[RMDB]
RNA sequence: GGGAACGACUCGAGUAGAGUCGAAAAGAUGCGACCGCCCGAGUUGCCGGUGGUCUUGCUCAAUGGAUGACCGCCGAGACCCAAGUCGUCGCGGUCCGAGUGAAUGACCAGACUGCGUCCGAUGACGCUGUAUUCGCCGAAAAGACUCAUCACGUUGCGAUGCUUAUUCAUUCGUGAAUAAGCAUCGAAAAGAAACAACAACAACAAC
Reactivity to DMS in 0.01 (KOAc 150mM, MgCl2 10mM, bicine 150mM(pH8.5), 24C), signal-to-noise 1, nucleotides 027 to 156: g010a110u000g020c070g000a020c000c030g030c020c030c020g000a060g030u000u010g000c090c020g000g050u020g040g020u000c010u000u010g000c010u000c120a200a200u010g010g000a080u000g000a060c000c020g000c010c000g020a150g000a080c000c070c040a110a130g030u000c080g010u000c010g050c000g020g000u000c010c020g010a110g020u020g020a120a080u000g010a090c000c010a170g020a090c030u000g010c010g000u000c010c090g050a200u010g010a000c000g000c060u000g020u010a080u000u010c070g000c020c000g020a130a100a120a090g000a030c020u000c040a110u000c040a250c020g030u000u010g010
Reactivity to 2A3 in 0.01 (KOAc 150mM, MgCl2 10mM, bicine 150mM(pH8.5), 24C), signal-to-noise 3, nucleotides 027 to 156: g100a040u140g050c040g010a010c010c010g050c010c020c010g040a040g120u030u020g060c040c010g020g040u020g010g010u030c040u010u070g090c060u040c140a170a260u220g070g020a030u090g060a000c000c020g000c040c030g060a100g010a080c090c020c010a030a020g120u010c030g010u030c060g000c010g000g010u010c020c030g040a030g020u070g030a060a080u130g010a060c030c040a040g050a110c040u050g000c000g000u010c070c100g080a120u300g000a000c010g000c020u000g010u010a080u010u050c040g030c060c000g040a100a030a020a060g040a050c020u010c090a100u090c060a090c110g000u000u000g030